[RMDB]
RNA sequence: GGGAACGACUCGAGUAGAGUCGAAAAGUCGCAUGACCAUCGAGGUUGUCGACCCGGCGGACUGGCGGCAGGCGGCGAGCGCGUCCGGACCGCUGCGGACGUUCAACGAAGCCCGUGUCAUCGAUGCAGUAAUUUAUGCUUUCGAGCAUAAAUUACUAAAAGAAACAACAACAACAAC
Reactivity to 2A3 in 0.01 (KOAc 150mM, MgCl2 10mM, bicine 150mM(pH8.5), 24C), signal-to-noise 9, nucleotides 027 to 126: g040u020c010g040c120a010u030g010a020c030c020a060u150c050g040a170g090g030u030u050g080u060c000g030a120c000c000c000g010g000c000g000g020a060c010u030g020g000c020g010g090c020a070g140g050c030g030g030c070g040a070g040c110g000c010g070u070c020c000g000g050a140c010c010g000c020u020g000c120g010g010a030c020g060u140u110c040a070a020c040g060a020a020g030c010c020c030g040u050g010u010c010a020u000c010g010a010u070g050c010
Reactivity to DMS in 0.01 (KOAc 150mM, MgCl2 10mM, bicine 150mM(pH8.5), 24C), signal-to-noise 4, nucleotides 027 to 126: g000u010c020g020c150a060u010g000a080c070c120a100u010c060g030a180g010g000u000u000g020u000c020g000a060c010c010c000g000g000c010g000g020a110c040u000g010g020c000g010g000c010a090g010g030c010g000g000c030g000a110g000c060g010c020g010u020c000c000g000g020a100c010c030g000c020u010g000c140g010g010a110c050g020u050u010c040a020a050c040g000a130a140g020c070c020c060g000u040g000u000c020a040u000c020g010a030u020g010c160
The record gives the reactivity of an RNA of 177 nucleotides to 2A3 and DMS. The RNA was probed in 150 mM KOAc, 10 mM MgCl2 and 150 mM bicine (pH 8.5) at 24 C. Source: RMDB library OK1LIB, as collected in RNAgym. 2A3 adducts were read by reverse transcription with SuperScript II with manganese. DMS adducts were read by reverse transcription with MarathonRT.